An RNA of 177 nucleotides, treated with DMS and 2A3 and read out base by base.
In probing experiments dimethyl sulfate is read out at A N1 and C N3, which are open when not base-paired.
The reactions ran in a buffer of 150 mM KOAc, 10 mM MgCl2 and 150 mM bicine (pH 8.5), at 24 C.
2A3 adducts were read by reverse transcription with SuperScript II with manganese.
For 2A3, 26,128 sequencing reads were counted.
The DMS profile rests on 35,558 reads.

RNA sequence: GGGAACGACUCGAGUAGAGUCGAAAAAGGCUCUAAGAUCUGCGAUGGAGACGAGAGACGAUCCUGAGUCGCUUGGCACAUCGAGUCAGGAUCUUGCCGAUGUGGAUGAGCAGGAUGUAGCGGAUUACUGAAAAUGAUUAUUCGUAAUCAUUUUCAGAAAAGAAACAACAACAACAAC
Reactivity to DMS in 0.01 (KOAc 150mM, MgCl2 10mM, bicine 150mM(pH8.5), 24C), signal-to-noise 9, nucleotides 027 to 126: a120g000g010c020u000c030u000a070a080g010a090u000c020u000g010c050g010a100u010g000g000a100g010a100c100g010a080g010a100g010a070c100g000a080u000c040c030u000g000a090g010u000c030g010c060u000u000g010g000c030a040c040a070u000c000g000a080g010u010c060a040g000g010a030u000c030u000u010g020c030c020g010a080u000g010u000g000g010a100u000g000a070g010c030a060g010g000a070u000g010u010a070g010c040g000g000a100u000u000a170
Reactivity to 2A3 in 0.01 (KOAc 150mM, MgCl2 10mM, bicine 150mM(pH8.5), 24C), signal-to-noise 9, nucleotides 027 to 126: a000g040g000c010u020c020u040a090a080g010a170u020c020u060g040c060g110a110u150g050g020a070g020a060c050g020a030g000a010g000a090c050g010a020u000c020c000u030g030a050g090u030c020g020c050u060u070g070g010c030a020c000a060u020c010g030a040g150u080c010a000g010g040a060u010c000u030u060g020c010c010g020a030u070g040u070g080g060a180u050g010a000g020c030a010g040g060a060u090g030u100a020g030c030g010g050a070u060u100a100